[RMDB]
RNA sequence: GGGAACGACUCGAGUAGAGUCGAAAAGUUAAAUGCUACCAGAUUCUGAUCUUCUUCAAAUUCAAGAUCUUUGCCUUGUGUCAACAAAGCAACAAUGUUUUCCUUAGUGAGCUUAACCUUAGACAUGAGGCAUCUAUCUUUUCGAAGAUAGAUGCCUAAAAGAAACAACAACAACAAC
Reactivity to DMS in 0.01 (KOAc 150mM, MgCl2 10mM, bicine 150mM(pH8.5), 24C), signal-to-noise 2, nucleotides 027 to 126: g000u040u040a000a120a040u030g040c060u030a110c000c030a130g000a130u050u020c140u000g020a070u040c040u000u030c040u000u010c130a040a020a210u050u010c120a020a030g040a010u000c010u030u000u020g000c000c020u000u000g000u020g000u010c010a090a080c130a000a100a040g010c130a160a030c180a050a020u020g000u000u010u010u000c030c010u050u010a060g010u020g020a130g000c010u000u000a020a110c090c080u000u020a040g000a030c080a040u020g020
Reactivity to 2A3 in 0.01 (KOAc 150mM, MgCl2 10mM, bicine 150mM(pH8.5), 24C), signal-to-noise 5, nucleotides 027 to 126: g020u020u040a080a130a050u160g010c010u030a070c020c000a010g040a140u110u060c050u090g000a020u040c020u100u010c000u120u110c140a110a100a240u220u120c060a030a070g020a080u010c000u050u010u050g010c000c000u000u060g030u010g070u090c000a020a030c020a090a140a010g050c020a000a040c020a100a090u120g110u040u060u030u060c040c020u040u020a060g020u090g100a020g020c010u070u070a050a030c020c020u000u140a060g030a040c030a080u150g070
An RNA of 177 nucleotides, treated with DMS and 2A3 and read out base by base. Values cover nucleotides 27 to 126.